[RMDB]
Description: Chemical mapping of a 177-nucleotide RNA with 2A3 and DMS. Source: RMDB library M2PK90, as collected in RNAgym. Values are in units of 0.01, from 0 to 300, in steps of 10. The RNA was probed in 150 mM KOAc, 10 mM MgCl2 and 150 mM bicine (pH 8.5) at 24 C.

RNA sequence: GGGAACGACUCGAGUAGAGUCGAAAAUAAUAUGCAUAUCGAGUUCCCAUGUAUUUUCGUACCCCUGCGGCUGUAACAUUACAGCUUAGUAAGAAUGCUACCUAACGAUAGCUAGCCGCAGGAUUAAGGUAUUAUUAUGGUUCGCCAUAAUAAUACCAAAAGAAACAACAACAACAAC
Reactivity to 2A3 in 0.01 (KOAc 150mM, MgCl2 10mM, bicine 150mM(pH8.5), 24C), signal-to-noise 6, nucleotides 027 to 126: u070a010a030u140a060u170g040c040a040u070a090u220c090g080a040g080u020u020c010c010c000a000u050g040u020a100u010u120u010u100c080g030u040a050c000c030c010c010u000g000c010g010g000c000u030g050u100a060a020c010a100u020u070a010c020a040g040c040u010u020a030g000u000a010a020g040a070a020u080g000c000u010a010c010c020u050a080a040c060g070a090u020a020g010c010u020a000g000c000c000g000c000a000g000g010a000u000u020a010a010
Reactivity to DMS in 0.01 (KOAc 150mM, MgCl2 10mM, bicine 150mM(pH8.5), 24C), signal-to-noise 9, nucleotides 027 to 126: u010a080a100u010a060u010g010c080a070u000a100u010c090g010a180g010u000u000c000c010c000a120u000g010u000a040u010u000u000u000c070g010u000a130c230c100c010c000u000g010c010g000g000c000u000g000u010a080a110c190a100u000u010a010c020a160g010c200u000u010a080g010u000a020a020g000a090a080u010g010c010u000a010c030c020u010a090a130c220g000a050u000a010g000c010u000a020g010c000c000g000c000a010g000g000a030u000u000a060a110